Chemical mapping of a 177-nucleotide RNA with 2A3.
The RNA was probed in 150 mM KOAc, 10 mM MgCl2 and 150 mM bicine (pH 8.5) at 24 C.
The 2A3 profile rests on 524 reads.
The data come from the RNA Mapping Database (RMDB), library RFM100.
[RMDB]
RNA sequence: GGGAACGACUCGAGUAGAGUCGAAAAAUCAAGGGAAGUCCCGCGAGGGACAAGGGUAGUACCCUUGGCAACUGCACAGAAAACUUACCCCUAAAUAUUCAAUGAGGAUUUGAUUCGACUCUUACCUGCUUGUGUAUGCCUUCGGGCAUACACAAGCAAAAGAAACAACAACAACAAC
Reactivity to 2A3 in 0.01 (KOAc 150mM, MgCl2 10mM, bicine 150mM(pH8.5), 24C), signal-to-noise 2, nucleotides 027 to 126: a000u040c030a030a020g090g000g010a110a000g000u020c010c010c030g010c050g020a050g000g040g000a000c000a000a000g060g050g000u060a020g110u300a300c000c000c000u020u020g000g000c030a000a150c000u060g010c090a090c010a100g110a000a120a000a100c060u090u170a210c030c000c000c060u060a060a060a040u150a140u080u100c080a090a120u170g030a080g070g010a020u000u000u160g020a070u030u030c020g020a020c000u020c020u070u150a050c000c020u000